Notes: An RNA of 207 nucleotides, treated with 2A3 and read out base by base. 2A3 adducts were read by reverse transcription with SuperScript II with manganese. For 2A3, 565 sequencing reads were counted. It was measured as part of the RMDB library M2RFPK.
[RMDB]
RNA sequence: GGGAACGACUCGAGUAGAGUCGAAAAAGCCACCGCUACGGCGGUGGCAAGUAGAAAAGUUGGUGCUUAGACCACGCCCUCUACCGUAAUAAGAGAUAAAUAGGCGAGUAUCAGUACGCUGAUACAAAAAACACUCACACGUUCGCGUGUGAGUGAACAUCCCCUGCAUGUUCGCAUGCAGGGGAUGAAAAGAAACAACAACAACAAC
Reactivity to 2A3 in 0.01 (KOAc 150mM, MgCl2 10mM, bicine 150mM(pH8.5), 24C), signal-to-noise 1, nucleotides 027 to 156: a000g000c020c010a000c000c000g060c010u010a010c260g140g000c000g010g060u000g000g010c000a000a010g000u000a010g000a040a050a010a020g040u090u000g000g000u100g050c130u220u120a050g030a120c010c010a050c010g020c000c000c000u010c010u030a100c050c030g030u000a010a080u100a300a030g040a010g010a030u080a230a170a030u110a040g010g000c010g010a020g000u000a000u000c000a010g000u060a030c250g040c020u010g000a010u000a010c000a040a120a000a000a000a000c000a000c010u010c010a000c000a000c000g030u090u080c170g000c010g120u000g000u000g000a000g000u000g000a010a010